Description
This 177-nucleotide RNA was probed chemically with 2A3. The RNA was probed in 150 mM KOAc, 10 mM MgCl2 and 150 mM bicine (pH 8.5) at 24 C. Values are in units of 0.01, from 0 to 300, in steps of 10. High 2A3 reactivity points to a flexible backbone, as in loops and unpaired stretches. For 2A3, 831 sequencing reads were counted.

RNA sequence: GGGAACGACUCGAGUAGAGUCGAAAAUACGCGAGGUUCGCCUCGCGUAAAAGAGGAGCGUAAACGUGAGCGUACGUAGUGCUGUAGAUCGUUCCUACACGAAUGCACAUGGUUUCGACCAUGUGAAGGACGGGGAUCGUUUCGACGAUCCCCGUCCAAAAGAAACAACAACAACAAC
Reactivity to 2A3 in 0.01 (KOAc 150mM, MgCl2 10mM, bicine 150mM(pH8.5), 24C), signal-to-noise 1, nucleotides 027 to 126: u010a000c000g000c000g000a010g070g050u020u200c280g050c110c000u000c000g000c030g000u000a000a000a000a000g160a070g120g000a040g000c030g090u150a090a080a040c040g000u060g060a060g150c020g040u020a010c070g080u130a000g140u050g120c050u010g050u100a040g020a190u030c010g010u030u000c040c010u040a050c090a000c020g130a110a100u240g000c000a000c000a000u040g110g000u000u060u100c120g070a030c000c000a000u000g000u000g000a020a010